[RMDB]
RNA sequence: GGGAACGACUCGAGUAGAGUCGAAAAUUACAGUGUGCUAGCGAGGGAACUCCGUCCGGGGGUGAACCGCGAAACAGUACCGGACUCACCAAGUAGCAUCCUGUCUUUCGGAGACUGCUUGGUUAAAUAAAAGAGAGACUAAACAUGUAGUGCCGAGCUGCAUAUAUUGCUUCGGCAAUAUAUGCAGAAAAGAAACAACAACAACAAC
Reactivity to 2A3 in 0.01 (KOAc 150mM, MgCl2 10mM, bicine 150mM(pH8.5), 24C), signal-to-noise 3, nucleotides 027 to 156: u170u080a060c020a040g020u040g010u020g150c020u030a030g020c010g040a300g010g010g020a010a020c030u020c040c030g090u050c060c030g060g000g000g010g000u020g010a020a010c000c020g000c020g040a010a010a030c080a010g040u050a040c000c000g010g010a010c010u030c080a010c010c000a030a000g010u020a000g020c030a050u010c010c000u030g010u030c000u000u030u020c000g010g000a010g000a020c000u000g010c010u010u020g010g010u010u070a030a050a010u070a000a010a010a000g020a000g000a000g010a010c050u120a010a110a040c030a080u120g030u080a050g050u040g080c090c040g010a020g040
Reactivity to DMS in 0.01 (KOAc 150mM, MgCl2 10mM, bicine 150mM(pH8.5), 24C), signal-to-noise 2, nucleotides 027 to 156: u010u010a110c090a080g020u010g010u010g010c010u010a250g030c010g050a160g000g010g010a190a020c010u000c010c060g010u010c150c050g020g010g050g000g020u010g020a240a270c020c000g060c010g000a170a060a140c020a090g000u000a040c040c030g040g030a070c020u000c060a120c020c010a020a030g010u000a010g030c020a060u000c020c010u020g020u000c040u010u000u000c000g030g000a080g000a300c010u000g020c000u000u010g010g010u000u000a030a080a070u010a070a100a110a130g000a090g000a120g000a060c000u000a100a110a100c100a040u000g000u000a060g000u000g010c000c030g030a220g000